RNA sequence: GGGAACGACUCGAGUAGAGUCGAAAACAGAGACCGAAGAUGAUGAGGUAUCCGAAGAAGUUGUAAAAGGAGAUCCCACCACUUAUUACACUAUCGUCGGCGCGGGUCUUAACAUGAACUUUGGAUUCACCAAAUGCCCAAAGAUUUCAUCCAUCUCAGGGAUAACUAACUUCGGUUAGUUAUCCCUAAAAGAAACAACAACAACAAC
Reactivity to 2A3 in 0.01 (KOAc 150mM, MgCl2 10mM, bicine 150mM(pH8.5), 24C), signal-to-noise 2, nucleotides 027 to 156: c050a000g060a000g010a020c000c090g010a030a070g000a020u060g000a000u020g000a040g070g000u020a010u000c040c020g000a020a000g040a010a030g090u140u020g010u040a020a050a030a020g110g020a020g000a040u040c000c000c000a040c000c000a000c010u110u090a050u080u250a080c070a030c100u100a120u130c130g010u030c120g030g030c040g030c180g000g040g000u030c000u000u030a020a020c030a050u030g100a060a040c000u030u000u050g010g020a020u170u140c010a000c030c020a040a070a020u120g050c070c010c000a020a020a000g030a020u010u040u050c020a040u070c020c060a020u100c030u010c090
Reactivity to DMS in 0.01 (KOAc 150mM, MgCl2 10mM, bicine 150mM(pH8.5), 24C), signal-to-noise 1, nucleotides 027 to 156: c020a120g000a090g000a070c000c010g000a090a090g010a120u000g020a070u000g010a110g020g000u010a040u000c010c000g040a060a070g020a050a180g050u000u000g010u010a070a130a060a140g010g040a040g010a150u020c000c010c030a100c040c030a100c010u020u000a120u000u000a070c070a050c110u000a000u000c040g030u000c050g070g030c040g040c100g000g050g000u000c030u020u000a070a070c030a140u000g030a040a120c000u010u000u030g010g000a100u000u010c040a190c070c070a000a090a300u000g010c130c010c010a050a040a130g010a190u000u000u010c010a040u000c040c050a110u000c050u000c100
Source: RMDB library OK3TST, as collected in RNAgym. This 207-nucleotide RNA was probed chemically with 2A3 and DMS. The RNA was probed in 150 mM KOAc, 10 mM MgCl2 and 150 mM bicine (pH 8.5) at 24 C. For DMS the reverse transcriptase was MarathonRT. The DMS profile rests on 1,482 reads. Values are in units of 0.01, from 0 to 300, in steps of 10.